[RMDB]
RNA sequence: GGGAACGACUCGAGUAGAGUCGAAAAAUUUUCCAGCCUCAUUUUAUAAAUCCAGGCUUCUAGUUCUAUAGACUAGGGAAACUAUCAUGGAAAUGGUAUGCAAGGCAAGUGCCUGAGGCUGAGAUGGCACAAAGCACCGUGGUAUCUUGGGGUUACAAUUAGGUAUACCGUUCGCGGUAUACCUAAUAAAAGAAACAACAACAACAAC
Reactivity to 2A3 in 0.01 (KOAc 150mM, MgCl2 10mM, bicine 150mM(pH8.5), 24C), signal-to-noise 1, nucleotides 027 to 156: a010u120u220u020u040c010c010a000g030c000c030u060c030a030u000u210u300u210a080u210a120a100a100u110c060c090a120g010g000c000u010u060c010u120a000g010u070u000c110u210a230u190a230g060a060c000u030a000g050g050g000a000a070a040c040u030a080u170c010a110u040g010g040a070a140a040u150g010g010u040a030u060g030c010a010a080g030g030c100a170a080g040u040g080c000c050u030g010a000g030g030c060u030g000a070g000a170u100g010g000c040a030c040a040a080a000g010c030a060c030c100g080u040g040g000u060a000u030c030u010u040g000g000g000g000u050u080a010c100a050